[RMDB]
RNA sequence: GGGAACGACUCGAGUAGAGUCGAAAAAGGAAGAAGCGGAGACAGCGACGAAGAGCUCAUCAGAACAGUCAGACUCAUCAAGCUUCUCUAUCAAAGCAGUAAGUAGUACAUGUAAUGCAACCUAUACAUUCCUCGUAUUGUUCGCAAUACGAGGAAUAAAAGAAACAACAACAACAAC
Reactivity to DMS in 0.01 (KOAc 150mM, MgCl2 10mM, bicine 150mM(pH8.5), 24C), signal-to-noise 4, nucleotides 027 to 126: a070g010g000a030a040g020a020a070g000c100g010g020a040g010a090c180a050g010c050g000a100c080g020a130a080g000a140g030c080u000c040a030u040c140a080g020a060a080c240a060g010u030c060a100g010a100c040u000c010a050u020c060a100a150g000c000u020u000c000u010c020u000a100u030c150a050a060a110g000c050a040g000u010a030a090g000u010a090g020u020a060c090a040u010g000u010a060a050u020g010c070a120a100c040c030u000a050u030a110c200
Reactivity to 2A3 in 0.01 (KOAc 150mM, MgCl2 10mM, bicine 150mM(pH8.5), 24C), signal-to-noise 6, nucleotides 027 to 126: a000g160g010a120a060g010a040a010g030c040g010g020a010g020a020c040a020g010c030g030a020c070g030a100a050g010a010g030c030u010c030a120u050c050a060g060a150a070c030a020g070u060c010a000g030a200c010u010c010a070u030c030a070a060g000c000u050u000c000u000c010u000a080u070c070a120a070a010g030c010a010g030u140a190a020g000u070a030g030u040a050c030a100u110g080u110a040a040u070g020c000a040a030c020c000u070a050u040a160c050
An RNA of 177 nucleotides, treated with DMS and 2A3 and read out base by base.
The 2A3 profile rests on 6,673 reads.
Source: RMDB library OK1LIB, as collected in RNAgym.
For 2A3 the reverse transcriptase was SuperScript II with manganese.
Reactivities are given for positions 27 through 126.
DMS (dimethyl sulfate) methylates the pairing face of unpaired adenines and cytosines.